Annotation:
Source: RMDB library M2RFPK, as collected in RNAgym. Structure probing data (2A3 and DMS) for a 207-nucleotide construct. For 2A3 the reverse transcriptase was SuperScript II with manganese. For DMS, 2,001 sequencing reads were counted. The reactions ran in a buffer of 150 mM KOAc, 10 mM MgCl2 and 150 mM bicine (pH 8.5), at 24 C.
RNA sequence: GGGAACGACUCGAGUAGAGUCGAAAACAUUACGAAUUCAGUCGCAAAUUGUAGAAUUAGCUACUCUACGAUUUAGUGAGCGUUAGUAACGUUGUAAUAUAUUAUAGUCUUUGGAAGGAUUAUAUUGGAGCCGCGGACAAGUUCGCUUGUCCGCGAAGGUAGUAGUAUGGUUCGCCAUACUACUACCAAAAGAAACAACAACAACAAC
Reactivity to 2A3 in 0.01 (KOAc 150mM, MgCl2 10mM, bicine 150mM(pH8.5), 24C), signal-to-noise 4, nucleotides 027 to 156: c010a060u100u190a030c020g070a090a100u150u180c070a090g110u030c010g000c030a000a000a010u000u010g000u000a000g000a020a030u080u040a050g040c030u090a050c010u000c000u000a000c000g020a000u010u010u120a070g020u010g030a050g060c010g020u040u080a040g030u060a090a030c060g000u000u040g020u040a150a050u080a050u010a020u180u040a030u050a030g010u000c030u060u120u190g110g060a090a050g030g000a020u000u000a020u040a030u080u090g070g030a060g080c090c000g000c010g000g000a000c000a000a010g010u030u090c130g030c160u010u000g000u000c000c000g020c000g000a000a000
Reactivity to DMS in 0.01 (KOAc 150mM, MgCl2 10mM, bicine 150mM(pH8.5), 24C), signal-to-noise 1, nucleotides 027 to 156: c000a060u000u000a030c000g010a070a070u010u020c030a070g020u010c010g070c020a040a010a000u000u000g020u000a010g000a070a060u010u000a300g010c230u000a120c130u010c010u010a040c000g000a040u010u010u000a070g000u000g000a000g040c130g020u000u010a100g000u010a020a030c020g010u000u000g010u000a120a120u000a110u000a040u030u000a060u010a010g030u000c020u000u000u020g020g010a160a230g030g010a030u000u010a030u000a020u000u010g010g000a120g030c130c010g020c000g000g020a030c000a050a040g020u010u010c300g050c020u000u000g020u000c030c000g010c000g020a010a010